[RMDB]
The record gives the reactivity of an RNA of 177 nucleotides to 2A3. For 2A3, 928 sequencing reads were counted. Conditions: 150 mM KOAc, 10 mM MgCl2 and 150 mM bicine (pH 8.5), 24 C.
RNA sequence: GGGAACGACUCGAGUAGAGUCGAAAAAAGAUUUUAAUUUUCCGUUGGUCUAUUAAGAACAGAAGUACUUCAAAACUACUUUUUAAGACCAUCCUUUUACAGUAUUUUUUCAAUAUUGUAAAACUUCGUUUUUAGCACGAUUCGUCGUGCUAAAAACAAAAGAAACAACAACAACAAC
Reactivity to 2A3 in 0.01 (KOAc 150mM, MgCl2 10mM, bicine 150mM(pH8.5), 24C), signal-to-noise 3, nucleotides 027 to 126: a000a000g170a040u180u190u140u230a110a120u040u070u030u070c010c020g000u010u000g000g000u000c010u010a060u100u110a200a040g120a160a040c050a050g070a080a000g050u020a010c060u070u050c060a040a040a000a000c010u030a020c000u040u000u000u060u100a040a020g010a010c000c000a030u040c000c050u000u000u000u000a000c000a010g000u000a010u000u070u060u010u030u260c060a000a010u000a010u010u010g000u000a000a010a050a070c020u120u140c040